[RMDB]
An RNA of 207 nucleotides, treated with DMS and 2A3 and read out base by base. Reactivities are given for positions 27 through 156. Conditions: 150 mM KOAc, 10 mM MgCl2 and 150 mM bicine (pH 8.5), 24 C.
RNA sequence: GGGAACGACUCGAGUAGAGUCGAAAAGACGUGGAGGUCUCGCGCCCUCCUUUGCGCGUAAGUACGUCGAAAUUCGGUGCUUUGGAUCGCACCGUUUGAUCCAUUAGAUAUCCGCUUUGUGCCGCGGUUGGGCAUUUACACUUACCCGAAAGGGGAAGCAUAUAUCGACUUUCGAGUCGAUAUAUGCAAAAGAAACAACAACAACAAC
Reactivity to DMS in 0.01 (KOAc 150mM, MgCl2 10mM, bicine 150mM(pH8.5), 24C), signal-to-noise 2, nucleotides 027 to 156: g030a030c080g000u000g030g000a060g040g010u010c000u020c120g010c100g010c200c020c000u000c040c020u000u000u010g010c010g010c050g000u000a110a070g010u000a030c070g030u010c030g020a110a060a080u000u000c000g010g010u000g010c040u000u000u010g000g020a140u010c240g040c060a190c040c050g000u020u010u000g000a110u010c030c040a130u010u000a090g010a150u000a100u010c010c020g020c110u010u010u000g070u000g030c000c040g010c070g000g010u000u020g010g000g020c060a080u000u000u010a100c080a080c070u000u000a220c000c020c010g010a060a070a160g050g000g000g000a070a150
Reactivity to 2A3 in 0.01 (KOAc 150mM, MgCl2 10mM, bicine 150mM(pH8.5), 24C), signal-to-noise 3, nucleotides 027 to 156: g000a010c010g000u030g030g100a030g030g050u050c020u080c060g000c020g020c030c000c000u120c020c000u080u070u140g000c000g000c000g000u030a070a030g110u030a010c030g020u050c060g080a100a040a030u060u040c020g000g010u010g010c000u110u070u140g100g050a110u150c020g000c010a020c000c020g010u040u010u060g000a020u020c010c000a040u070u130a030g050a080u070a080u110c020c000g000c000u110u150u150g060u050g010c030c030g010c030g030g020u060u060g070g000g000c000a030u050u070u160a070c080a010c020u060u110a040c010c000c000g040a050a020a010g000g000g010g000a010a010